[RMDB]
RNA sequence: GGGAACGACUCGAGUAGAGUCGAAAAGCUGAGAAAUUCGUUUCUCAGCACUGGAAAUAAAGCGGAAAGGCUAGCCAUUCCUUAUUUGGCGAAAGCCUGGCAUGAGCCUCCACUUCGGUGGAGGCAACGCUAGAAAACAUUUCGAUGUUUUCUAGCGAAAAGAAACAACAACAACAAC
Reactivity to 2A3 in 0.01 (KOAc 150mM, MgCl2 10mM, bicine 150mM(pH8.5), 24C), signal-to-noise 4, nucleotides 027 to 126: g010c000u010g000a010g020a010a070a020u100u100c160g050u030u020u010c000u000c000a000g000c000a010c010u040g080g110a030a150a110u180a090a240a000g060c060g110g060a140a060a010g040g000c000u010a010g000c010c000a030u080u060c010c020u090u150a220u140u090u040g000g000c020g020a140a050a000g020c000c000u010g000g000c040a070u110g080a030g030c000c000u000c010c000a010c000u030u080c210g070g000u010g010g000a000g000g000c000a000a000
Reactivity to DMS in 0.01 (KOAc 150mM, MgCl2 10mM, bicine 150mM(pH8.5), 24C), signal-to-noise 4, nucleotides 027 to 126: g010c000u000g000a010g000a000a000a030u010u010c150g010u000u000u000c000u010c000a000g010c010a030c110u010g020g000a090a100a090u010a060a110a110g010c080g040g000a080a100a030g010g020c010u000a200g000c010c020a030u010u010c160c130u010u010a120u010u010u000g010g000c000g000a110a110a090g010c000c000u000g000g030c090a120u000g000a150g000c000c010u000c000c000a010c010u000u000c120g030g000u000g000g010a000g010g010c000a010a010